[RMDB]
RNA sequence: GGGAACGACUCGAGUAGAGUCGAAAAGGGGUCCAAGAUUCCACGAGGAGAGGAUCUACGAGAACAUGAAGACAUGCUCUGAAGCCUCCACGGAGCAACAGCUUCAUGUUCUCGUAGAUCCUCUCUCCCCACCGUGGAUCUUGGACGGAGGCACCCAGCAGUAUCUAAUGUUCGCAUUAGAUACUGCAAAAGAAACAACAACAACAAC
Reactivity to DMS in 0.01 (KOAc 150mM, MgCl2 10mM, bicine 150mM(pH8.5), 24C), signal-to-noise 1, nucleotides 027 to 156: g000g000g000g060u000c000c000a030a020g020a060u000u020c030c000a070c040g010a300g000g010a020g000a040g010g010a020u010c000u000a000c030g020a040g010a040a010c020a060u000g000a010a000g010a120c040a300u000g030c010u000c000u000g010a120a130g030c010c040u000c030c040a300c010g030g000a020g000c000a000a100c080a150g020c030u000u020c050a010u000g000u000u010c000u000c040g000u000a000g000a010u000c010c000u000c000u000c010u000c180c070c000c000a300c120c000g040u030g000g010a040u000c010u010u010g030g000a010c000g010g010a050g030g000c000a290c000c000c040a170
Overview: The record gives the reactivity of an RNA of 207 nucleotides to DMS. For DMS the reverse transcriptase was MarathonRT. The RNA was probed in 150 mM KOAc, 10 mM MgCl2 and 150 mM bicine (pH 8.5) at 24 C. Values are in units of 0.01, from 0 to 300, in steps of 10. It was measured as part of the RMDB library RNAMAK.